RNA sequence: GGGAACGACUCGAGUAGAGUCGAAAAAAACAACUUCCGCAUCCUCCCAAGCUAACACUUAGAGCGCCUUGUAGAUAGAAUUGUGUUCGUAUUUGUGUAUAAUAACUGCAAGGGACGUCAAUGCAUCACAGUAUCUGUCUUUCGAGACAGAUACUGUAAAAGAAACAACAACAACAAC
Reactivity to DMS in 0.01 (KOAc 150mM, MgCl2 10mM, bicine 150mM(pH8.5), 24C), signal-to-noise 3, nucleotides 027 to 126: a090a040a070c060a080a070c080u010u000c020c020g020c030a050u000c080c040u000c010c020c010a060a180g020c060u000a070a060c090a060c080u000u000a070g000a100g010c020g000c010c020u000u000g020u000a040g000a140u000a100g010a090a080u020u000g020u000g010u000u010c030g030u000a090u010u010u000g020u000g030u010a080u000a060a050u000a040a110c080u000g000c020a020a090g000g000g010a020c030g010u010c080a060a020u000g020c070a090u000c090
Reactivity to 2A3 in 0.01 (KOAc 150mM, MgCl2 10mM, bicine 150mM(pH8.5), 24C), signal-to-noise 2, nucleotides 027 to 126: a000a000a000c040a020a000c050u060u040c060c010g000c030a050u130c000c050u030c000c000c000a000a000g010c000u030a020a020c040a020c050u000u120a020g010a000g120c000g010c010c000u010u030g030u020a030g030a220u070a080g190a120a110u080u100g050u020g030u080u020c030g030u050a120u040u120u120g020u000g050u010a050u020a250a000u090a060a020c010u020g020c000a000a010g030g000g030a020c020g000u010c030a000a070u040g050c010a030u130c060

The record gives the reactivity of an RNA of 177 nucleotides to DMS and 2A3. Values cover nucleotides 27 to 126. For DMS, 1,979 sequencing reads were counted. In probing experiments dimethyl sulfate is read out at A N1 and C N3, which are open when not base-paired. 2A3 adducts were read by reverse transcription with SuperScript II with manganese.